[RMDB]
RNA sequence: GGGAACGACUCGAGUAGAGUCGAAAAACACCUGGUCAAAGAGGAAGGCCUUUCCUGAUAAAGGAGGACCAUUCUCAGUCAAGGGUAUGUGAGUACCUGUUCUCCCCUGCCAGAAUCUCAAACGAGCUGCGAAUCAGUUUUUCGAAACUGAUUCGCAAAAAGAAACAACAACAACAAC
Reactivity to 2A3 in 0.01 (KOAc 150mM, MgCl2 10mM, bicine 150mM(pH8.5), 24C), signal-to-noise 2, nucleotides 027 to 126: a020c090a080c040c000u030g030g030u160c130a160a070a030g010a020g090g010a000a140g050g070c000c000u090u120u090c000c000u020g030a120u110a210a080a010g010g020a040g000g000a090c020c000a030u040u030c000u000c000a000g000u050c030a090a080g030g000g000u060a050u180g130u060g030a080g020u000a010c000c070u050g100u130u060c000u020c010c000c000c000u010g060c030c000a010g020a070a050u070c000u010c000a200a200a070c070g040a030g080c010
Reactivity to DMS in 0.01 (KOAc 150mM, MgCl2 10mM, bicine 150mM(pH8.5), 24C), signal-to-noise 2, nucleotides 027 to 126: a040c130a120c130c000u000g000g000u010c240a000a040a100g030a010g000g010a000a070g000g000c030c000u000u030u030c050c030u000g000a120u050a070a080a010g000g010a040g010g000a090c000c000a110u000u000c050u020c000a130g000u020c080a060a070g000g000g040u010a000u010g000u010g020a300g020u000a000c000c010u000g030u030u010c000u000c000c020c000c010u000g000c010c040a070g000a080a070u020c020u000c020a040a090a140c220g010a080g030c230
Source: RMDB library RFM100, as collected in RNAgym. Structure probing data (2A3 and DMS) for a 177-nucleotide construct. For DMS the reverse transcriptase was MarathonRT. The RNA was probed in 150 mM KOAc, 10 mM MgCl2 and 150 mM bicine (pH 8.5) at 24 C.